[RMDB]
RNA sequence: GGGAACGACUCGAGUAGAGUCGAAAAGCAUUCCACUUCGGUGGAAUGCAAAUGCCGGCUGCAAGAAAAGUGCUUCAAAGAGUGGGAGGACUGCCGAAGAAAAAAGUUCCAUGUUCGCAUGGAACAAGUUCUUUAUUCUCUUCGGAGAAUAAAGAACAAAAGAAACAACAACAACAAC
Reactivity to DMS in 0.01 (KOAc 150mM, MgCl2 10mM, bicine 150mM(pH8.5), 24C), signal-to-noise 3, nucleotides 027 to 126: g010c010a010u000u000c000c000a000c000u000u010c130g020g020u000g000g010a010a000u000g000c000a010a020a060u000g010c040c020g000g010c030u000g010c100a080a070g010a070a050a110a110g010u000g000c020u020u010c070a090a090a110g000a100g020u000g000g010g010a040g010g000a050c090u010g010c030c020g010a110a110g020a000a070a060a050a100a060g010u000u000c000c000a020u000g000u000u010c210g010c010a000u000g000g000a000a000c000a030a050
Reactivity to 2A3 in 0.01 (KOAc 150mM, MgCl2 10mM, bicine 150mM(pH8.5), 24C), signal-to-noise 4, nucleotides 027 to 126: g000c000a000u000u010c000c000a000c000u030u050c170g080g000u000g000g000a000a000u000g000c000a000a000a030u080g010c010c010g020g000c020u050g000c050a050a050g060a100a140a010a020g040u050g040c000u020u020c040a060a110a060g080a090g050u100g020g000g000a010g010g020a020c020u030g000c020c010g060a100a100g090a050a170a010a030a000a010g000u000u000c000c000a010u000g050u020u040c230g000c070a000u010g000g000a010a000c000a000a010
Overview: This 177-nucleotide RNA was probed chemically with DMS and 2A3. For DMS, 2,740 sequencing reads were counted. For 2A3 the reverse transcriptase was SuperScript II with manganese.